[RMDB]
RNA sequence: GGGAACGACUCGAGUAGAGUCGAAAAGGUUUCUUCUUUCACUCUGUAGCUGGAAUCCCUGUUGCGCUUGCUGGCGAAACCUGCAGGGAAGCUAGCUGGGUCCCGCUAGUCGAGCGGACUCGUCCCACAUAACAUUUUCCUUCGGGAAAAUGUUAUGAAAAGAAACAACAACAACAAC
Reactivity to DMS in 0.01 (KOAc 150mM, MgCl2 10mM, bicine 150mM(pH8.5), 24C), signal-to-noise 3, nucleotides 027 to 126: g000g020u000u010u010c050u010u000c040u000u000u000c050a040c020u000c030u000g010u010a030g020c020u000g030g010a040a080u000c010c000c010u000g010u000u000g010c120g040c040u000u010g010c140u010g000g010c040g010a110a050a120c220c050u000g020c010a010g000g000g000a020a030g020c010u000a010g020c000u000g000g000g020u010c070c010c030g020c010u000a140g000u010c160g010a080g020c010g000g000a050c030u000c020g010u000c000c000c000a300
Reactivity to 2A3 in 0.01 (KOAc 150mM, MgCl2 10mM, bicine 150mM(pH8.5), 24C), signal-to-noise 2, nucleotides 027 to 126: g100g020u040u080u020c020u060u000c010u010u110u070c050a040c030u060c040u080g160u160a000g000c010u010g020g010a030a050u020c000c000c000u000g030u020u070g050c040g000c050u110u300g150c180u250g050g030c010g010a140a070a090c030c040u010g000c010a000g000g000g000a020a000g010c010u020a000g010c000u020g000g020g030u040c050c080c010g000c020u030a070g180u190c120g140a010g010c000g010g000a010c010u000c030g010u000c000c000c010a020